[RMDB]
RNA sequence: GGGAACGACUCGAGUAGAGUCGAAAAACUGCCGUUGGCCUGCCGGUAUUAACGGUAGUGGCGCUGGCAAAAGUUGGCGGCGGUGUUGACAGCCUCAGCACGCCAAUCGGUAAAGUCGCUGGCGUACCUCGUAACACGUAUUCGUACGUGUUACGAGAAAAGAAACAACAACAACAAC
Reactivity to 2A3 in 0.01 (KOAc 150mM, MgCl2 10mM, bicine 150mM(pH8.5), 24C), signal-to-noise 3, nucleotides 027 to 126: a010c010u010g020c010c000g040u060u020g030g040c000c030u120g110c120c130g020g010u130a150u160u160a090a020c020g000g000u000a000g000u040g040g000c000g000c000u010g000g000c000a080a050a000a030g010u010u010g000g000c010g010g000c030g020g000u060g010u050u080g070a070c030a030g050c000c000u020c010a020g010c010a010c040g020c000c000a010a050u090c040g020g060u130a070a090a050g070u110c050g010c000u000g000g000c020g010u050a130c010
Reactivity to DMS in 0.01 (KOAc 150mM, MgCl2 10mM, bicine 150mM(pH8.5), 24C), signal-to-noise 4, nucleotides 027 to 126: a060c030u000g000c010c010g020u000u000g010g000c020c000u000g020c240c130g000g010u000a090u020u000a020a030c010g000g010u000a020g010u000g010g000c040g000c010u000g010g010c010a060a080a090a140g000u000u000g000g010c030g010g000c020g000g010u000g010u000u010g000a090c170a240g010c130c050u000c050a060g000c030a090c020g020c000c010a030a030u000c040g010g000u010a070a100a110g000u010c140g030c050u000g000g000c020g020u000a090c120
Overview
This 177-nucleotide RNA was probed chemically with 2A3 and DMS. 2A3 adducts were read by reverse transcription with SuperScript II with manganese. For DMS the reverse transcriptase was MarathonRT. It was measured as part of the RMDB library OK2TST. The RNA was probed in 150 mM KOAc, 10 mM MgCl2 and 150 mM bicine (pH 8.5) at 24 C.